[RMDB]
RNA sequence: GGGAACGACUCGAGUAGAGUCGAAAAGCUAGUAGGUACUGAUCUAGGUACGAUCCGUACCACUAGGACGUCUAGCUCUCUAGACGCGCUAGUAGCAGACCAUGCAUGUGUCUGAUAUCAUGGUACCGUCCCUACAAGCCUUCGGGCUUGUAGGGACAAAAGAAACAACAACAACAAC
Reactivity to DMS in 0.01 (KOAc 150mM, MgCl2 10mM, bicine 150mM(pH8.5), 24C), signal-to-noise 1, nucleotides 027 to 126: g020c050u000a100g000u010a150g010g000u000a000c030u070g000a010u010c030u000a170g030g010u000a060c080g010a000u000c000c070g000u000a010c000c000a200c010u000a000g000g000a040c000g000u000c000u000a000g000c300u000c300u000c000u000a040g000a010c010g010c070g010c000u010a000g000u000a140g000c000a030g000a010c030c000a090u000g000c300a120u010g000u000g010u000c060u040g000a060u000a060u000c050a150u000g000g020u000a050c040c080
Reactivity to 2A3 in 0.01 (KOAc 150mM, MgCl2 10mM, bicine 150mM(pH8.5), 24C), signal-to-noise 2, nucleotides 027 to 126: g050c000u020a010g030u090a180g080g000u000a040c010u000g000a000u000c060u150a050g060g070u140a040c060g020a010u000c000c020g020u000a000c000c000a010c000u010a020g010g070a020c030g000u000c000u020a020g000c080u000c000u080c030u240a010g000a030c000g000c030g010c000u080a030g030u040a030g110c020a010g030a010c000c030a070u130g080c030a100u180g180u090g060u140c030u130g070a050u020a040u140c130a090u160g020g010u030a030c000c000